[RMDB]
RNA sequence: GGGAACGACUCGAGUAGAGUCGAAAAGCGUCCUGGUAAUGUCCCCGGGAAUAGGCAUAGGCGCCCUGGAGCAUCUUCAGAUGGAACGAGGCCUGUGUACAUCCCGGGAGGAGCAACAGGACGAGGACAUAUAUGCUGUUUUCGAACAGCAUAUAUGAAAAGAAACAACAACAACAAC
Reactivity to 2A3 in 0.01 (KOAc 150mM, MgCl2 10mM, bicine 150mM(pH8.5), 24C), signal-to-noise 8, nucleotides 027 to 126: g060c000g000u000c000c000u010g010g080u190a160a090u070g050u100c000c000c000c010g000g010g020a070a130u180a170g070g000c010a010u010a010g010g000c020g100c030c010c000u020g020g010a030g040c100a140u090c050u100u070c030a060g020a200u170g030g050a120a060c070g030a050g090g050c000c000u000g000u000g000u010a100c020a040u000c000c000c000g010g000g000a010g000g000a030g000c010a010a050c000a010g010g000a000c000g000a020g010g030a010
Reactivity to DMS in 0.01 (KOAc 150mM, MgCl2 10mM, bicine 150mM(pH8.5), 24C), signal-to-noise 9, nucleotides 027 to 126: g000c010g010u000c000c000u000g000g010u010a090a100u020g000u000c050c000c000c000g010g010g010a030a030u010a120g000g000c000a010u000a020g000g010c020g010c020c020c000u000g020g010a170g010c100a060u010c020u000u010c200a110g010a070u010g010g010a120a150c090g010a100g000g010c000c010u000g020u000g000u000a040c040a200u000c000c000c000g000g000g000a010g010g010a170g000c040a080a120c010a010g000g000a020c010g010a050g010g010a240